[RMDB]
RNA sequence: GGGAACGACUCGAGUAGAGUCGAAAACUUUCACCAUGGUUCAUGGAUGGCGAAAAUGCCUAUGAAGUGGUGAAGGCCAUGUUACUUAAAAAGGAGCCACUUCUCUAUGUGCCCAUCCGGCUGGCUGUACGUUGCUACUUCGGUAGCAACAAAAGAAACAACAACAACAAC
Reactivity to 2A3 in 0.01 (KOAc 150mM, MgCl2 10mM, bicine 150mM(pH8.5), 24C), signal-to-noise 9, nucleotides 027 to 129: c000u020u040u020c020a020c030c000a030u070g250g000u040u010c000a000u030g120g080a100u060g050g030c020g090a110a090a100a130u280g000c000c000u050a040u040g000a010a010g000u000g000g000u050g010a030a010g040g000c020c000a060u170g080u130u130a160c060u080u160a050a070a080a030a040g090g000a010g020c020c010a040c000u120u040c040u000c020u060a130u160g080u070g030c000c010c010a060u040c020c010g020g000c010u010g010g000c000u010g030u060a040c080
Reactivity to DMS in 0.01 (KOAc 150mM, MgCl2 10mM, bicine 150mM(pH8.5), 24C), signal-to-noise 5, nucleotides 027 to 129: c040u040u030u010c030a000c020c010a070u000g000g010u040u000c000a030u020g070g020a030u010g010g030c020g000a090a070a100a110u060g040c030c010u010a030u000g030a060a030g030u010g000g040u000g000a000a000g010g000c000c050a000u000g000u030u040a120c080u070u000a040a110a040a140a070g000g020a120g030c070c030a050c000u010u010c030u040c070u040a070u060g010u000g000c040c010c080a070u000c060c070g020g040c010u000g020g000c050u040g000u000a070c150